[RMDB]
RNA sequence: GGGAACGACUCGAGUAGAGUCGAAAAGCUAGAGCGUUGUCGGGCUGCGAAGCGGUCGUAUUAGGCCGGAUAUGCGACGUCAGUUUGAUCCUGACCGGCCUAAGGAUCUUACUGGUGCUCUAGGAAAGGCGAGUUCGCGGUUCGCUGCGGAUUUGCCAAAAGAAACAACAACAACAAC
Reactivity to DMS in 0.01 (KOAc 150mM, MgCl2 10mM, bicine 150mM(pH8.5), 24C), signal-to-noise 9, nucleotides 027 to 126: g010c010u000a000g000a010g010c010g020u010u030g010u000c020g010g010g010c010u010g010c050g010a140a130g020c020g010g010u000c000g010u010a050u020u010a030g000g010c010c000g000g010a300u020a060u020g010c040g010a020c030g010u020c010a010g020u000u000u000g000a010u000c010c000u000g000a120c010c010g000g000c000c000u000a040a020g000g010a010u000c010u000u000a010c000u000g000g020u010g010c000u000c000u000a010g000g010a060a090a110
Reactivity to 2A3 in 0.01 (KOAc 150mM, MgCl2 10mM, bicine 150mM(pH8.5), 24C), signal-to-noise 9, nucleotides 027 to 126: g060c000u000a000g000a000g000c020g050u050u120g020u040c010g000g020g010c010u020g010c070g100a150a030g030c010g000g000u010c010g010u020a080u050u070a030g010g000c020c060g020g030a160u170a060u260g110c020g010a010c010g040u050c000a000g000u000u030u030g010a010u010c000c000u040g070a180c020c000g000g000c000c000u000a010a010g000g000a000u000c000u000u020a010c000u010g010g020u040g000c000u000c000u000a010g020g030a080a060a010